Conditions: 150 mM KOAc, 10 mM MgCl2 and 150 mM bicine (pH 8.5), 24 C. Chemical mapping of a 207-nucleotide RNA with 2A3 and DMS. It was measured as part of the RMDB library OK3TST. As a SHAPE reagent, 2A3 marks flexible, mostly unpaired nucleotides at the ribose 2'-OH. For 2A3 the reverse transcriptase was SuperScript II with manganese.
RNA sequence: GGGAACGACUCGAGUAGAGUCGAAAAUAGGCGAACGAGAGGCCCUCUCUUGUGCGGAGUUGUCACGCUGACAUAAUUGUUAUGAUGUCCGAUUCCGGUAGCAUCGCGGCGAUGAUUUCAUAGGACAUCUUAUGAACCCAAGAGCUUCGGGGAAGCAGCAUUAUACCCUCUUCGGAGGGUAUAAUGCAAAAGAAACAACAACAACAAC
Reactivity to 2A3 in 0.01 (KOAc 150mM, MgCl2 10mM, bicine 150mM(pH8.5), 24C), signal-to-noise 1, nucleotides 027 to 156: u130a010g030g040c010g000a000a040c010g020a120g000a050g110g070c000c020c000u050c000u040c010u030u020g060u090g000c080g060g010a120g010u140u030g070u080c010a000c120g010c030u020g000a020c040a040u170a070a150u100u120g020u070u110a040u160g010a040u000g010u000c000c000g070a100u150u060c040c010g000g010u020a020g070c060a020u080c060g000c040g090g070c000g070a080u040g010a020u130u140u120c010a010u080a030g010g000a010c010a060u020c000u020u080a120u050g030a010a030c050c000c010a000a020g020a040g120c010u150u150c120g020g000g010g030a000a000g010c050a000
Reactivity to DMS in 0.01 (KOAc 150mM, MgCl2 10mM, bicine 150mM(pH8.5), 24C), signal-to-noise 1, nucleotides 027 to 156: u000a130g010g000c030g010a090a020c050g020a060g010a060g030g040c070c040c030u010c010u000c020u020u000g000u000g000c000g010g010a170g000u000u000g030u000c040a100c070g120c040u000g000a090c030a120u000a040a140u000u000g000u000u000a070u000g010a060u000g000u000c020c010g030a210u000u010c090c030g010g000u010a060g000c000a040u000c010g030c100g050g020c100g000a070u000g000a110u000u010u000c030a050u000a140g000g000a060c070a050u000c020u000u000a050u000g000a040a140c040c040c060a030a110g010a210g020c040u010u000c080g020g000g050g010a070a050g000c030a100